[RMDB]
RNA sequence: GGGAACGACUCGAGUAGAGUCGAAAAAAGCCAGUGGCGCGAAGCUACCGUGUGCCGGAUUAUGACUGAACGCCUCUAAGUCAGAAUCCAAGCUAGCAACCGGCGCCUGUGCCCGCCGCUCGCCCCGGGCUGUAUAACAUUUCGAUGUUAUACAGCCAAAAGAAACAACAACAACAAC
Reactivity to 2A3 in 0.01 (KOAc 150mM, MgCl2 10mM, bicine 150mM(pH8.5), 24C), signal-to-noise 6, nucleotides 027 to 126: a010a000g030c020c010a030g000u020g020g020c020g030c090g080a070a020g010c040u080a070c030c020g150u150g010u040g140c010c020g000g000a020u060u070a050u140g020a020c000u020g020a130a060c070g070c030c010u030c030u040a040a010g000u010c000a010g030a020a030u030c050c020a020a020g050c060u110a020g040c030a040a070c020c020g020g000c000g020c000c010u030g000u040g010c020c000c000g000c000c000g000c000u000c010g010c000c000c000c000g020
Reactivity to DMS in 0.01 (KOAc 150mM, MgCl2 10mM, bicine 150mM(pH8.5), 24C), signal-to-noise 4, nucleotides 027 to 126: a070a070g020c020c040a040g020u010g000g000c050g040c080g000a090a120g000c050u010a050c060c030g050u020g010u020g020c010c100g010g020a020u000u000a060u000g000a030c000u000g000a120a100c180g000c040c030u000c030u020a250a040g010u010c010a020g000a080a020u000c030c030a150a080g000c140u010a090g000c030a090a090c050c030g000g000c300g000c070c060u000g010u010g000c030c030c030g000c030c030g030c030u000c140g000c030c010c000c090g000
An RNA of 177 nucleotides, treated with 2A3 and DMS and read out base by base. 2A3 adducts were read by reverse transcription with SuperScript II with manganese. The RNA was probed in 150 mM KOAc, 10 mM MgCl2 and 150 mM bicine (pH 8.5) at 24 C. Source: RMDB libraries RFM100 and RFMREP, as collected in RNAgym.